Description:
Structure probing data (2A3 and DMS) for a 207-nucleotide construct.
RNA sequence: GGGAACGACUCGAGUAGAGUCGAAAAGCGAACGCCGUGGAUGACCGCGAUGCUGUUCCGUUUGGUCAACUAAAGACCAUGAACCAGAACUCAUGGCAAGCACGUAAUGAAGCCUUACAGUUCCGUAAUGAGGCUGAGACUUUCAGAAACCAAGCGGCGCUUGGAUGAAUUUCGAUUCAUCCAAGCGAAAAGAAACAACAACAACAAC
Reactivity to 2A3 in 0.01 (KOAc 150mM, MgCl2 10mM, bicine 150mM(pH8.5), 24C), signal-to-noise 3, nucleotides 027 to 156: g070c020g020a070a010c040g010c040c010g000u000g040g070a100u120g090a120c000c020g000c020g040a040u110g030c070u030g020u020u000c010c030g000u000u000u010g020g000u050c050a080a050c100u090a090a060a030g030a070c010c010a000u010g010a020a070c110c090a040g020a150a040c020u020c020a010u010g030g010c030a020a020g080c060a030c140g040u080a070a060u130g070a060a000g000c010c000u050u050a080c030a070g030u110u130c050c050g030u090a120a080u150g020a030g050g000c000u030g010a020g010a050c000u070u140u110c080a030g070a020a020a010c000c000a000a000g010c010g000g020
Reactivity to DMS in 0.01 (KOAc 150mM, MgCl2 10mM, bicine 150mM(pH8.5), 24C), signal-to-noise 2, nucleotides 027 to 156: g040c060g020a100a100c050g020c020c070g070u030g000g040a170u000g000a140c000c010g070c030g020a200u000g050c000u000g000u000u000c000c030g010u000u020u010g010g000u010c040a050a110c070u020a060a270a260g020a090c010c000a000u000g000a070a180c070c040a300g010a080a230c210u000c010a000u000g010g060c000a090a060g010c100a080c110g020u000a130a080u010g010a060a050g000c000c000u000u000a130c040a040g010u020u010c000c040g040u000a120a150u000g010a050g010g030c000u000g010a090g010a050c020u000u010u000c050a050g000a300a070a050c010c010a000a020g020c000g030g000

Annotation:
2A3 is a SHAPE reagent: it acylates the 2'-hydroxyl of flexible nucleotides of all four kinds. Values cover nucleotides 27 to 156. For DMS, 3,261 sequencing reads were counted.